[RMDB]
RNA sequence: GGGAACGACUCGAGUAGAGUCGAAAAUGAUGAUAUGGCAGAUUCGCCCCGCUUGCUGUGCAACACAAGUAAAGUGAUUGAUGAUUUUCAUGUACUGGCUGCGUUCUUCCUCAACCGGCACUUGGUGGCCCUCGUCAAUCAGGAGUAAAUCCACUGGGCGAAGUAGUAAAUUCGUUUACUACUUCGCAAAAGAAACAACAACAACAAC
Reactivity to 2A3 in 0.01 (KOAc 150mM, MgCl2 10mM, bicine 150mM(pH8.5), 24C), signal-to-noise 6, nucleotides 027 to 156: u120g040a030u030g010a030u050a060u170g060g000c030a030g050a150u070u090c020g050c000c000c010c010g020c030u040u060g000c030u030g020u060g040c070a090a060c040a020c030a150a040g030u140a150a050a020g030u040g020a080u090u030g030a040u020g030a050u050u030u100u130c060a060u110g040u080a040c040u050g060g020c010u010g010c040g060u070u000c010u080u020c000c020u080c020a060a070c040c020g020g000c030a020c050u030u050g070g000u030g050g040c010c000c000u030c020g030u000c020a030a120u040c010a030g030g050a030g040u110a030a090a060u050c010c050a030c080u060g020g050
Reactivity to DMS in 0.01 (KOAc 150mM, MgCl2 10mM, bicine 150mM(pH8.5), 24C), signal-to-noise 2, nucleotides 027 to 156: u010g000a080u010g010a110u000a060u000g030g010c040a090g000a160u000u000c050g000c040c000c020c060g000c090u010u010g020c010u000g040u000g020c100a110a090c080a090c090a040a090g020u010a030a050a120g000u000g010a100u000u010g010a100u000g010a150u010u010u000u010c030a090u000g020u000a070c040u000g010g010c010u000g010c070g020u000u010c040u010u010c020c040u000c030a080a050c030c000g020g000c010a040c030u010u000g020g010u000g020g020c040c040c030u000c030g010u000c030a030a050u000c030a070g000g010a120g020u000a030a060a110u000c030c020a110c060u020g030g010